[RMDB]
RNA sequence: GGGAACGACUCGAGUAGAGUCGAAAAGAUAUGGAUGUAUUCAAAGUCCCGUUGAAACGACAUCGGAAACGAUGUCGUGGAGGGAUUUGAGAUACAUCCUAAGUCAAAAGCACACUUCGGUGUGCAACAGACUCUUGAUCUUCGGAUCAAGAGUCUGAAAAGAAACAACAACAACAAC
Reactivity to 2A3 in 0.01 (KOAc 150mM, MgCl2 10mM, bicine 150mM(pH8.5), 24C), signal-to-noise 1, nucleotides 027 to 126: g040a000u070a060u140g000g000a000u000g000u000a040u030u150c030a090a070a070g190u070c000c030c000g180u220u020g000a000a010a000c000g000a000c010a000u000c030g020g000a110a070a020c030g010a010u030g000u020c000g000u000g000g020a010g030g010g020a000u060u020u090g050a100g000a000u000a000c010a010u000c000c000u010a050a000g040u020c050a130a030a060a140g000c000a020c000a010c000u080u220c300g170g000u040g010u010g030c000a000a000
Reactivity to DMS in 0.01 (KOAc 150mM, MgCl2 10mM, bicine 150mM(pH8.5), 24C), signal-to-noise 1, nucleotides 027 to 126: g000a040u000a300u030g000g000a000u000g010u000a000u060u010c040a150a030a070g010u000c000c000c000g000u020u010g000a270a100a000c000g000a010c000a010u000c000g000g010a080a130a100c010g020a000u010g010u000c010g000u000g000g000a050g000g030g000a120u000u000u000g010a150g020a040u000a000c000a010u000c000c000u000a030a080g010u010c050a070a080a110a190g050c000a020c000a000c010u000u000c200g030g000u010g010u000g000c000a080a090
Chemical mapping of a 177-nucleotide RNA with 2A3 and DMS. It was measured as part of the RMDB library TTRDES. 2A3 adducts were read by reverse transcription with SuperScript II with manganese. For DMS, 1,094 sequencing reads were counted.